[RMDB]
RNA sequence: GGGAACGACUCGAGUAGAGUCGAAAAGAUAUGGACCUAAUAAGACAUGGACGUCGGAAACGACAGUCCAACAGCUUAUAGGUCCUAAGUCAAAACUUAUUAACAUCCUUCGGGAUGUUAAUAAGAACCAAUGGUGUUAGUUCGCUAACACCAUUGGAAAAGAAACAACAACAACAAC
Reactivity to 2A3 in 0.01 (KOAc 150mM, MgCl2 10mM, bicine 150mM(pH8.5), 24C), signal-to-noise 3, nucleotides 027 to 126: g010a010u040a010u080g000g000a010c010c000u080a250a240u020a130a070g070a110c070a120u040g000g010a010c000g000u010c000g000g010a040a030a000c010g020a010c100a100g000u010c010c000a010a010c030a000g040c000u000u010a010u010a020g010g000u000c010c000u010a000a000g020u010c020a010a010a090a150c000u010u000a000u000u000a000a000c000a000u000c000c000u020u080c200g180g000g000a000u000g000u010u000a000a000u000a000a000g000a010a020
Reactivity to DMS in 0.01 (KOAc 150mM, MgCl2 10mM, bicine 150mM(pH8.5), 24C), signal-to-noise 3, nucleotides 027 to 126: g000a010u000a290u010g000g000a010c000c000u010a070a080u000a010a010g000a080c090a260u000g010g000a020c000g020u000c000g020g000a060a040a140c000g020a010c000a070g040u000c000c000a020a070c220a140g010c010u010u000a000u000a010g000g010u000c000c000u000a020a060g000u010c010a080a090a100a150c000u000u000a000u000u000a000a000c000a010u000c000c000u000u000c210g020g020g000a000u000g000u000u000a000a000u000a010a010g030a100a300
Structure probing data (2A3 and DMS) for a 177-nucleotide construct. Reactivities are rounded to 0.1 and cut off at 0 and 3. High DMS reactivity at an A or C suggests that its Watson-Crick edge is free. For 2A3 the reverse transcriptase was SuperScript II with manganese. The 2A3 profile rests on 9,090 reads. The DMS profile rests on 2,929 reads. The data come from the RNA Mapping Database (RMDB), library TTRDEL.